Conditions: 150 mM KOAc, 10 mM MgCl2 and 150 mM bicine (pH 8.5), 24 C. The record gives the reactivity of an RNA of 177 nucleotides to DMS and 2A3.
[RMDB]
RNA sequence: GGGAACGACUCGAGUAGAGUCGAAAAGAUAUGGACGGUAGUAGGGAGAAGUGGGUCGGAAACGACCCACCUUCAUCGAUCUACAGCCGUCCUAAGUCAAACACGGGGAAGUUCGCUUCCCCGUGAAGAUAUAUCUCCUCUUCGGAGGAGAUAUAUCAAAAGAAACAACAACAACAAC
Reactivity to DMS in 0.01 (KOAc 150mM, MgCl2 10mM, bicine 150mM(pH8.5), 24C), signal-to-noise 6, nucleotides 027 to 126: g000a020u000a180u000g000g010a010c010g000g010u000a140g030u000a000g000g010g010a180g020a030a050g030u000g010g000g030u010c000g000g000a050a050a100c000g000a020c010c000c000a000c120c040u000u010c020a220u010c290g010a150u010c000u000a010c020a300g020c000c000g010u010c000c000u000a000a040g000u010c030a160a130a180c010a020c000g010g000g000g010a010a020g020u000u020c300g010c020u000u000c000c000c000c000g010u010g000a030a060
Reactivity to 2A3 in 0.01 (KOAc 150mM, MgCl2 10mM, bicine 150mM(pH8.5), 24C), signal-to-noise 3, nucleotides 027 to 126: g000a000u030a010u080g000g000a000c000g000g040u110a070g010u000a010g110g130g090a230g010a060a010g010u010g020g000g010u000c000g000g020a030a010a000c000g000a000c010c000c010a010c010c010u010u000c010a080u300c130g170a200u000c000u000a000c030a030g020c000c000g000u010c000c010u000a000a000g000u000c000a060a070a020c010a000c000g010g000g020g000a000a010g030u090u170c270g170c180u000u000c000c000c000c000g000u000g010a000a000
For 2A3 the reverse transcriptase was SuperScript II with manganese. Source: RMDB library TTRDES, as collected in RNAgym.